Notes
This 177-nucleotide RNA was probed chemically with 2A3 and DMS. The RNA was probed in 150 mM KOAc, 10 mM MgCl2 and 150 mM bicine (pH 8.5) at 24 C. DMS adducts were read by reverse transcription with MarathonRT. For 2A3 the reverse transcriptase was SuperScript II with manganese.
RNA sequence: GGGAACGACUCGAGUAGAGUCGAAAAGAUAUGGACACCAAUUUCAACAGCCCAGGGUGUCGGAAACGACACCUGGGACAUGAAAUGGUGUCCUAAGUCAAACAGGAGCGUGUUCGCACGCUCCUGAUCAGAUCAUAACCUUCGGGUUAUGAUCUGAAAAAGAAACAACAACAACAAC
Reactivity to 2A3 in 0.01 (KOAc 150mM, MgCl2 10mM, bicine 150mM(pH8.5), 24C), signal-to-noise 2, nucleotides 027 to 126: g010a020u020a010u060g000g000a010c000a000c000c030a280a300u030u020u020c210a300a300c110a300g120c000c000c000a020g210g060g090u080g000u010c020g000g000a020a010a000c010g000a000c010a020c000c000u000g010g030g010a000c020a100u100g000a000a000a010u010g010g000u000g000u020c000c000u000a000a000g000u010c020a010a070a110c020a010g000g010a000g000c000g010u020g070u170u300c300g060c150a010c010g010c010u000c010c000u000g000a000
Reactivity to DMS in 0.01 (KOAc 150mM, MgCl2 10mM, bicine 150mM(pH8.5), 24C), signal-to-noise 2, nucleotides 027 to 126: g000a020u010a170u000g000g010a020c000a010c000c000a020a120u000u000u020c000a090a100c230a200g010c000c000c000a040g000g010g010u010g010u000c000g020g000a040a030a100c000g010a010c010a000c000c000u000g010g020g010a010c100a100u010g000a000a000a020u000g010g000u010g020u010c000c000u000a000a080g000u000c030a150a120a300c010a010g000g000a000g020c000g020u000g000u000u020c270g000c000a010c030g040c000u000c000c000u000g010a020